RNA sequence: GGGAACGACUCGAGUAGAGUCGAAAAGAGACAUUGCUCAUGAGGGACAAUCGGCCUAUAACGAAGCACAGUUACGUUUUGCACUCGCCUUUAGACAACAAAAGCGGUGGGAUAACGUGACCUUUAUAUCACCUUACAAUGCUAUGAAUGUCAAGGCAUGUAUUUACCGUUUCGACGGUAAAUACAUAAAAGAAACAACAACAACAAC
Reactivity to 2A3 in 0.01 (KOAc 150mM, MgCl2 10mM, bicine 150mM(pH8.5), 24C), signal-to-noise 9, nucleotides 027 to 156: g100a000g000a010c040a070u070u100g020c030u040c050a070u130g040a050g010g020g030a040c050a060a140u090c090g050g000c020c010u140a140u080a160a090c140g050a090a010g040c050a040c010a080g010u020u040a010c020g010u000u010u030u070g080c010a010c030u190c050g010c020c000u060u080u090a130g060a150c080a140a010c020a030a180a000a010g010c010g010g000u020g010g050g030a080u060a120a000c010g000u010g020a020c000c000u030u230u030a110u020a020u090c040a080c020c000u020u050a040c060a080a090u090g010c020u090a060u190g080a140a060u070g070u090c050a030a020g050g000c050
Reactivity to DMS in 0.01 (KOAc 150mM, MgCl2 10mM, bicine 150mM(pH8.5), 24C), signal-to-noise 5, nucleotides 027 to 156: g020a130g010a060c050a100u000u000g020c030u010c030a160u010g020a120g020g010g020a100c050a070a120u010c060g020g030c020c010u000a100u000a080a100c090g020a080a120g010c070a130c180a080g010u000u000a050c050g020u000u010u000u000g000c000a040c030u000c040g050c010c010u000u000u000a130g010a140c190a070a130c130a060a030a030a040g020c010g020g020u000g000g000g010a050u000a030a050c030g030u000g020a020c020c060u000u000u000a080u010a040u010c040a060c010c030u000u010a050c050a070a100u000g020c020u000a080u000g010a090a100u010g000u000c030a060a080g010g040c050